[RMDB]
Description: Chemical mapping of a 177-nucleotide RNA with 2A3. The data come from the RNA Mapping Database (RMDB), library OK1LIB. For 2A3, 626 sequencing reads were counted. Conditions: 150 mM KOAc, 10 mM MgCl2 and 150 mM bicine (pH 8.5), 24 C.
RNA sequence: GGGAACGACUCGAGUAGAGUCGAAAAUCAAAACAGUUAUUCUUGCAUCUAUAUGACCCUUUUUAGCCAAGUUGUGACAAAAAGUUCGUUUGUUAUAUAUCAACUUUUUGGCAAAAUCCGUUAAAAAUACUUUAGCGGGUUUCGACCCGCUAAAGUAAAAAGAAACAACAACAACAAC
Reactivity to 2A3 in 0.01 (KOAc 150mM, MgCl2 10mM, bicine 150mM(pH8.5), 24C), signal-to-noise 2, nucleotides 027 to 126: u090c040a060a030a060a010c090a050g000u010u000a010u150u000c050u030u050g000c000a020u070c030u130a100u040a020u270g110a100c000c000c080u000u040u000u000u060a030g010c010c000a010a110g000u000u020g050u030g050a080c000a000a020a100a000a000g050u100u100c190g000u000u120u040g130u150u020a120u020a050u020a020u270c010a000a000c020u000u000u000u090u040g030g000c000a000a010a010a010u000c020c020g020u020u020a100a000a000a020a080